[RMDB]
RNA sequence: GGGAACGACUCGAGUAGAGUCGAAAAUCUGUGAUAAUUAAGCGGCACCGGCGGCAGGCGAGGUAACCAUGGUCUCCAACCGGAAGCUGUGGCGGUGGCUCGCUGUCACCACUCAUUGGAGUCCACAACCAUUACUGCUAUUCGUAGCAGUAAUGGUAAAAGAAACAACAACAACAAC
Reactivity to 2A3 in 0.01 (KOAc 150mM, MgCl2 10mM, bicine 150mM(pH8.5), 24C), signal-to-noise 5, nucleotides 027 to 126: u020c030u030g070u040g090a070u040a300a100u270u090a140a020g040c030g040g000c030a020c050c010g030g000c010g020g000c020a010g000g090c020g010a020g050g080u060a020a030c030c010a040u050g030g000u020c010u000c020c040a110a230c090c090g070g000a040a000g010c040u020g000u020g040g000c050g030g060u080g070g050c060u060c050g030c010u020g010u000c000a000c020c000a020c010u050c020a050u040u140g060g000a020g020u030c000c020a060c040a060
Reactivity to DMS in 0.01 (KOAc 150mM, MgCl2 10mM, bicine 150mM(pH8.5), 24C), signal-to-noise 6, nucleotides 027 to 126: u000c040u020g020u000g010a090u010a090a110u000u010a120a110g020c040g000g000c050a070c070c040g010g010c060g000g010c060a040g010g010c030g010a040g000g010u000a120a100c060c040a060u000g010g010u010c030u000c010c020a080a100c260c220g010g010a080a070g010c050u010g010u000g000g010c040g000g010u000g020g000c050u000c140g010c060u000g000u000c030a050c020c060a090c070u010c050a110u000u000g010g010a070g000u000c020c020a070c210a070
The record gives the reactivity of an RNA of 177 nucleotides to 2A3 and DMS. The DMS profile rests on 6,556 reads. The RNA was probed in 150 mM KOAc, 10 mM MgCl2 and 150 mM bicine (pH 8.5) at 24 C.